[RMDB]
RNA sequence: GGGAACGACUCGAGUAGAGUCGAAAAAAAACGCUGGGAUCUAAGUACGAGCUAUAAUCUAUGGAGAACGCUACUGAAGCGCGCACGGUAGCGACCAUAGGUAGCUCGGAACUGAUCCUGUGCUGAAGCGCGCACGGCAACCGAAAGGUGCGAAAAACGUAUCGUCUAAGUUCGCUUAGACGAUACGAAAAGAAACAACAACAACAAC
Reactivity to 2A3 in 0.01 (KOAc 150mM, MgCl2 10mM, bicine 150mM(pH8.5), 24C), signal-to-noise 1, nucleotides 027 to 156: a000a000a000a020c010g000c000u000g010g000g000a000u000c000u020a040a020g010u000a000c000g000a000g000c000u060a070u040a300a010u000c000u000a000u000g020g000a060g040a300a080c010g000c000u000a010c000u020g040a230a050g020c000g000c000g000c000a000c010g000g000u000a000g000c000g010a010c000c000a000u000a010g030g000u010a000g000c000u000c000g000g000a000a000c000u000g000a000u000c010c000u000g000u000g000c000u010g010a160a030g010c000g000c000g000c000a010c010g010g000c010a010a000c000c010g050a100a050a030g000g000u000g000c070g060a110a000a040a000a000
Structure probing data (2A3) for a 207-nucleotide construct. The 2A3 profile rests on 2,423 reads. For 2A3 the reverse transcriptase was SuperScript II with manganese. Reactivities are given for positions 27 through 156. Conditions: 150 mM KOAc, 10 mM MgCl2 and 150 mM bicine (pH 8.5), 24 C. It was measured as part of the RMDB library RNAMAK.